[RMDB]
RNA sequence: GGGAACGACUCGAGUAGAGUCGAAAAUGUGUGACCCCAACACCAGGCCUGUAGGGGAGAAGAACUGCACGGGCCCGCCCUGUGACCGGCAGUGGACCGUCUCCGACUGGGGACCGGUGAGGCCUGCCAUUCACCCCAUGUUCGCAUGGGGUGAAUGAAAAGAAACAACAACAACAAC
Reactivity to DMS in 0.01 (KOAc 150mM, MgCl2 10mM, bicine 150mM(pH8.5), 24C), signal-to-noise 4, nucleotides 027 to 126: u010g020u010g020u010g010a190c040c010c010c030a190a080c030a030c050c020a030g000g020c000c010u000g020u010a180g010g000g010g010a120g000a110a110g000a120a020c010u000g010c020a090c030g010g000g000c070c010c040g000c120c070c050u000g000u010g010a050c020c030g010g000c010a010g010u010g000g000a150c060c030g000u010c000u000c000c010g000a160c200u010g000g010g000g000a070c070c030g020g000u000g010a060g010g010c010c000u010g000c180
Reactivity to 2A3 in 0.01 (KOAc 150mM, MgCl2 10mM, bicine 150mM(pH8.5), 24C), signal-to-noise 2, nucleotides 027 to 126: u140g040u010g020u040g150a120c000c010c000c020a020a000c010a000c010c000a010g010g000c000c000u060g090u270a110g000g010g040g050a030g030a050a020g010a040a010c020u030g000c120a100c290g000g020g020c040c040c020g080c030c020c040u130g090u160g060a050c020c010g000g000c010a000g010u060g040g030a010c010c000g030u000c010u010c010c040g300a300c180u210g000g020g000g020a030c060c110g050g030u020g010a010g020g010c000c000u000g010c020